[RMDB]
RNA sequence: GGGAACGACUCGAGUAGAGUCGAAAAAGUUCAUUCAUGCCAAGUAUCUUUCCAGCAUGUUUCUCCCAUUUAGAAUAUCUAGCAUGUAAGGCCUUUCAAUAUUAAUAUAAGCCCAAUAUCAGCUCUUGUACGGUGUUGACUUCGGUCAACACCGUACAAAAGAAACAACAACAACAAC
Reactivity to 2A3 in 0.01 (KOAc 150mM, MgCl2 10mM, bicine 150mM(pH8.5), 24C), signal-to-noise 1, nucleotides 027 to 126: a000g130u180u030c100a070u110u070c000a000u000g040c000c000a230a090g030u090a070u000c060u020u120u040c000c000a000g000c000a060u120g000u000u230u000c000u060c000c000c010a000u260u210u070a060g000a120a050u000a060u080c000u000a000g000c000a000u030g180u040a180a000g060g010c010c000u070u160u000c010a100a000u060a030u260u110a160a000u070a100u010a120a030g000c010c000c000a010a010u000a060u070c090a000g000c000u000c000u000u000